[RMDB]
RNA sequence: GGGAACGACUCGAGUAGAGUCGAAAAUCAGAAUCAGGCCGUAGUGUUUAGCGCUCCGUAAACACGGUCGUACAUCCAGCCGGUAGCCUGGUUCCUUGCAUUGAGUGAUGUACGGAGUUUAUAGAGCAAAAGAAAGACCUGUUCGCAGGUCUUUCAACACAUAAGCCAUCUUCGGAUGGCUUAUGUGAAAAGAAACAACAACAACAAC
Reactivity to 2A3 in 0.01 (KOAc 150mM, MgCl2 10mM, bicine 150mM(pH8.5), 24C), signal-to-noise 2, nucleotides 027 to 156: u120c000a010g030a020a010u020c000a000g000g000c030c060g080u090a040g040u050g040u060u030u070a080g050c080g000c050u000c030c020g020u030a000a000a000c040a010c060g040g040u020c000g020u020a000c000a000u010c010c000a010g130c060c010g070g050u090a040g000c020c000u010g000g020u000u030c010c030u070u160g040c010a170u060u190g040a080g110u170g020a000u000g020u010a000c010g000g000a040g000u070u150u020a120u040a040g040a000g000c020a070a000a100a000g000a000a020a000g000a000c000c000u020g010u050u110c250g000c120a000g000g000u000c000u000u000u000c000a000a000
Reactivity to DMS in 0.01 (KOAc 150mM, MgCl2 10mM, bicine 150mM(pH8.5), 24C), signal-to-noise 1, nucleotides 027 to 156: u000c050a080g020a050a040u000c000a010g010g050c030c070g010u000a170g010u020g020u000u010u000a060g020c100g020c000u000c000c010g010u000a020a040a020c030a120c080g000g010u000c030g070u000a020c010a020u000c010c010a280g000c040c060g030g010u000a070g020c050c000u000g020g010u000u000c000c030u000u010g000c160a140u020u000g020a180g000u010g010a030u000g030u000a010c010g000g010a140g020u010u000u000a020u000a040g000a070g010c010a100a060a130a160g020a030a010a030g000a020c000c000u000g010u010u000c300g070c010a030g030g020u000c000u000u000u000c000a020a270